[RMDB]
Chemical mapping of a 207-nucleotide RNA with 2A3. For 2A3 the reverse transcriptase was SuperScript II with manganese. The reactions ran in a buffer of 150 mM KOAc, 10 mM MgCl2 and 150 mM bicine (pH 8.5), at 24 C. Reactivities are rounded to 0.1 and cut off at 0 and 3.

RNA sequence: GGGAACGACUCGAGUAGAGUCGAAAAGAAAGAUGUCAUUUUGCUGAGUAUAGACGUUUUUGUGGGAACAAUCCCUAUUUGUUCCUCAGGAAGGCUCUCACUCCAAGACCAGCCUCCCUUUCUGCCAGUCUCUGAAAUUGGGCACUCAGUGUGGAGAGCUACGGAUACUGUUCGCAGUAUCCGUAGCAAAAGAAACAACAACAACAAC
Reactivity to 2A3 in 0.01 (KOAc 150mM, MgCl2 10mM, bicine 150mM(pH8.5), 24C), signal-to-noise 1, nucleotides 027 to 156: g080a020a030a010g060a030u070g030u060c030a040u020u080u130u190g030c020u060g000a000g020u030a010u020a180g030a070c060g030u020u000u020u070u090g110u170g020g020g000a010a000c000a020a120u090c000c010c000u010a120u030u000u030g000u000u010c010c010u070c020a020g000g060a030a040g020g000c010u010c010u010c080a040c060u030c020c010a050a050g000a070c040c080a020g010c000c010u000c010c000c020u060u060u020c090u090g010c000c000a070g070u010c040u010c020u100g080a060a110a140u120u150g020g010g000c010a020c010u040c030a060g040u030g030u100g140g040a090g020a040